An RNA of 177 nucleotides, treated with DMS and read out base by base.
RNA sequence: GGGAACGACUCGAGUAGAGUCGAAAACGUCUGCACCUCAGACUAUCCAGCCCGAGGUAAAAGAAGUUGCACCUGUCUAUGAGGCUGAUACCGAACAGACACAGAAUGUUACUGUUAAACCUAAGAGCUGAUACUCUCUCUUCGGAGAGAGUAUCAGAAAAGAAACAACAACAACAAC
Reactivity to DMS in 0.01 (KOAc 150mM, MgCl2 10mM, bicine 150mM(pH8.5), 24C), signal-to-noise 1, nucleotides 027 to 126: c100g050u000c000u000g000c300a090c000c020u000c000a070g000a030c000u000a180u010c280c090a080g090c010c040c050g000a050g040g000u000a090a120a050a040g040a050a030g030u000u000g030c130a090c030c010u010g000u000c030u020a060u000g010a180g000g060c050u000g000a200u000a120c000c010g000a130a010c080a000g000a170c080a060c130a170g000a080a220u010g010u000u000a010c010u000g000u000u000a040a080a040c130c040u000a130a200g000a240g030
Notes
Source: RMDB library 15KREP, as collected in RNAgym.